[RMDB]
Background
Structure probing data (DMS and 2A3) for a 177-nucleotide construct. DMS adducts were read by reverse transcription with MarathonRT. The DMS profile rests on 29,443 reads. For 2A3 the reverse transcriptase was SuperScript II with manganese. Values cover nucleotides 27 to 126. DMS (dimethyl sulfate) methylates the pairing face of unpaired adenines and cytosines. The reactions ran in a buffer of 150 mM KOAc, 10 mM MgCl2 and 150 mM bicine (pH 8.5), at 24 C.
RNA sequence: GGGAACGACUCGAGUAGAGUCGAAAAGGUUGGGAUCUGCAAGCGGUCACCGGUGGGCAAUGCGACGUUGGUCGUCUCCACCGGGCUGCGCCGCCGGUAGCCGGGGCCCGCCCGGUGAGUCUGCACCCUUAAUGUAGUUUUUCGAAACUACAUUAAGAAAAGAAACAACAACAACAAC
Reactivity to DMS in 0.01 (KOAc 150mM, MgCl2 10mM, bicine 150mM(pH8.5), 24C), signal-to-noise 7, nucleotides 027 to 126: g010g010u000u010g010g000g000a080u010c020u000g010c060a110a100g010c030g000g000u000c040a100c010c010g000g010u000g000g010g010c220a100a080u040g000c050g010a010c010g030u050u050g010g010u000c020g010u010c160u010c010c010a020c000c010g000g000g010c140u010g010c110g000c000c010g000c000c160g000g010u010a110g000c020c010g000g000g000g000c000c000c070g000c010c000c010g000g010u000g000a080g010u010c030u000g000c270a120c070c030
Reactivity to 2A3 in 0.01 (KOAc 150mM, MgCl2 10mM, bicine 150mM(pH8.5), 24C), signal-to-noise 6, nucleotides 027 to 126: g140g000u090u100g050g000g020a060u050c020u080g030c040a080a040g010c010g010g010u050c050a020c070c000g000g000u020g010g020g030c100a140a130u150g030c010g010a020c040g100u180u230g240g020u050c010g010u020c030u020c010c000a000c000c000g000g000g000c010u030g000c030g000c000c000g010c000c000g010g020u050a020g030c010c000g000g000g030g000c000c010c000g150c000c020c000g000g010u050g010a020g030u010c030u080g010c030a040c010c020